Source: RMDB library OK2TRN, as collected in RNAgym. This 177-nucleotide RNA was probed chemically with 2A3 and DMS. Values cover nucleotides 27 to 126. For 2A3, 4,376 sequencing reads were counted. The DMS profile rests on 11,012 reads. High DMS reactivity at an A or C suggests that its Watson-Crick edge is free. For DMS the reverse transcriptase was MarathonRT.
RNA sequence: GGGAACGACUCGAGUAGAGUCGAAAAGUGUGACGGACUGUUACACACUGUUCCGGGAUGCUUAUCAUCUGGCGGGGAUUGAGAUGCCGGACUUUCAUCGUGAGGAUGACUGGUGGCGUAACGGCCACAAGUCGUGCCAAUUCGUUGGCACGACUUGAAAAGAAACAACAACAACAAC
Reactivity to 2A3 in 0.01 (KOAc 150mM, MgCl2 10mM, bicine 150mM(pH8.5), 24C), signal-to-noise 4, nucleotides 027 to 126: g040u030g000u030g040a010c020g030g110a120c130u170g030u100u020a030c040a000c000a010c060u040g100u090u030c000c000g000g020g010a070u090g090c060u140u090a080u220c040a040u040c030u050g100g040c040g010g070g010g030a040u030u170g030a090g000a020u090g110c020c000g040g000a040c020u080u060u020c030a020u040c010g090u100g180a090g170g040a010u020g010a030c020u070g060g020u010g000g000c000g000u010a010a010c010g040g000c000c010a020
Reactivity to DMS in 0.01 (KOAc 150mM, MgCl2 10mM, bicine 150mM(pH8.5), 24C), signal-to-noise 5, nucleotides 027 to 126: g010u000g010u000g000a070c050g010g010a120c170u010g010u010u000a060c050a030c010a100c070u000g000u010u000c000c010g000g000g010a060u000g010c040u010u000a070u000c080a050u000c040u000g020g010c070g010g010g010g000a090u000u000g000a050g010a070u000g010c020c020g010g000a080c070u010u010u000c030a020u000c020g000u010g010a160g000g000a040u000g000a030c150u010g010g010u000g000g000c040g000u010a040a050c150g010g000c000c010a080